Structure probing data (DMS and 2A3) for a 207-nucleotide construct. Source: RMDB library OK3TST, as collected in RNAgym. For 2A3, 1,669 sequencing reads were counted. Values cover nucleotides 27 to 156.
[RMDB]
RNA sequence: GGGAACGACUCGAGUAGAGUCGAAAACUGUAUCAAUUCAUUGCUUGAAGUGGCUAAAUGUCAUAUCACCCCAGCUGACCUCUUAGCUAAACAACCUAUAUCAUCGGUAAGCGCCAUAUUAAAGGGAAAGUCUUGCUCUGGCAAUAUAUACCCCGUCCAGACUCUUUAGUUUCGACUAAAGAGUCUGAAAAGAAACAACAACAACAAC
Reactivity to DMS in 0.01 (KOAc 150mM, MgCl2 10mM, bicine 150mM(pH8.5), 24C), signal-to-noise 2, nucleotides 027 to 156: c080u000g040u000a080u010c020a070a150u020u000c060a120u020u010g020c020u000u020g000a030a170g030u000g020g020c030u000a000a090a070u000g020u000c030a080u030a130u010c070a120c050c030c010c020a300g000c150u000g000a070c010c020u000c040u020u000a040g020c030u000a040a120a110c060a110a070c060c020u000a070u020a090u020c060a060u000c060g030g000u000a000a110g010c050g040c000c020a090u000a120u010u000a040a110a100g020g000g010a100a050a110g010u000c050u000u000g020c020u000c040u000g040g010c030a050a070u000a070u000a100u010a140c010c000c000c040g000u000c040
Reactivity to 2A3 in 0.01 (KOAc 150mM, MgCl2 10mM, bicine 150mM(pH8.5), 24C), signal-to-noise 3, nucleotides 027 to 156: c040u070g030u110a080u090c030a040a060u190u080c030a010u060u090g020c030u040u090g060a100a020g030u010g070g000c000u030a050a100a040u140g020u020c020a050u050a060u190c080a110c010c010c000c020a000g000c040u030g020a060c020c010u020c000u040u050a000g000c020u050a090a050a030c050a020a010c000c010u090a080u030a030u280c040a040u080c040g020g030u030a060a020g030c030g040c060c010a010u080a100u100u220a110a080a050g010g020g000a130a100a040g030u050c020u050u040g020c020u030c030u050g010g000c010a050a020u090a000u050a050u100a150c010c040c040c010g050u100c070